[RMDB]
RNA sequence: GGGAACGACUCGAGUAGAGUCGAAAAACACCUCACCACAAGUUCUUAAGGCUUUGCAGAAGGCUGUUAAUAUAGCUAAAAACGCCUAUGAGAAGGAUAAGGCAGUGGCCCGUAAGUUAGAACGUAUUAAGAGACCAGUUCGCUGGUCUCAAAAGAAACAACAACAACAAC
Reactivity to 2A3 in 0.01 (KOAc 150mM, MgCl2 10mM, bicine 150mM(pH8.5), 24C), signal-to-noise 3, nucleotides 027 to 129: a000c050a050c010c010u010c010a060c010c000a020c020a060a050g040u010u010c010u010u070a100a030g050g000c000u000u050u060g020c040a030g020a080a030g010g000c040u030g000u010u000a080a030u160a040u050a080g030c030u050a090a070a000a000a000c030g000c000c000u050a120u130g020a010g000a050a030g000g000a050u030a070a070g000g000c000a010g050u040g050g000c000c010c000g060u090a040a050g020u030u080a010g000a040a010c020g010u100a110u190u170a110a010
Reactivity to DMS in 0.01 (KOAc 150mM, MgCl2 10mM, bicine 150mM(pH8.5), 24C), signal-to-noise 5, nucleotides 027 to 129: a100c160a110c070c010u030c110a120c110c010a090c150a080a080g020u010u070c010u010u010a070a150g040g030c020u000u000u000g030c140a130g030a150a090g010g020c040u060g020u010u040a040a030u040a100u000a100g030c080u020a070a090a030a050a060c180g040c000c020u010a130u050g030a100g000a070a030g040g050a000u040a040a060g010g080c060a050g050u030g020g010c020c020c020g000u040a040a150g040u040u000a210g020a000a000c050g030u040a060u000u040a070a160

Source: RMDB library 15KLIB, as collected in RNAgym.
Chemical mapping of a 170-nucleotide RNA with 2A3 and DMS.
Conditions: 150 mM KOAc, 10 mM MgCl2 and 150 mM bicine (pH 8.5), 24 C.
For 2A3 the reverse transcriptase was SuperScript II with manganese.